An RNA of 177 nucleotides, treated with DMS and 2A3 and read out base by base. The reactions ran in a buffer of 150 mM KOAc, 10 mM MgCl2 and 150 mM bicine (pH 8.5), at 24 C. The 2A3 profile rests on 1,326 reads. 2A3 is a SHAPE reagent: it acylates the 2'-hydroxyl of flexible nucleotides of all four kinds. For DMS the reverse transcriptase was MarathonRT. The data come from the RNA Mapping Database (RMDB), library OK2TST.

RNA sequence: GGGAACGACUCGAGUAGAGUCGAAAAGAUGUUUGUCGUAUCCACCUGCAGGAAUUCCUGCUGCGGAUGCUUGCGCCCACCCUGCGGCGGCACGGAAGCGACAGUGCCUUCCAUGAUCUUCAGCAGAAGUAAUUUAGUCCUUCGGGACUAAAUUACUAAAAGAAACAACAACAACAAC
Reactivity to DMS in 0.01 (KOAc 150mM, MgCl2 10mM, bicine 150mM(pH8.5), 24C), signal-to-noise 2, nucleotides 027 to 126: g000a100u000g010u000u000u010g000u010c110g020u000a060u000c010c020a050c090c130u000g000c000a020g000g010a300a220u010u000c010c010u000g010c010u010g010c060g010g010a030u000g000c020u000u020g010c060g010c040c000c040a100c160c110c040u010g000c000g000g000c300g000g010c030a040c050g020g010a040a060g000c020g010a110c160a090g030u010g010c140c010u010u000c020c030a080u010g010a070u010c010u000u000c030a090g010c040a030g000a110
Reactivity to 2A3 in 0.01 (KOAc 150mM, MgCl2 10mM, bicine 150mM(pH8.5), 24C), signal-to-noise 2, nucleotides 027 to 126: g000a070u100g090u100u180u170g060u080c020g000u030a030u010c000c010a010c050c110u060g000c020a030g050g130a230a300u300u230c000c000u000g030c020u030g000c060g000g030a030u060g000c040u050u110g000c010g000c010c010c010a040c040c010c030u010g000c000g010g020c030g000g020c040a010c030g020g030a070a050g000c030g030a040c070a030g090u070g040c000c000u050u000c000c000a030u050g030a060u020c040u050u040c030a050g000c010a030g020a050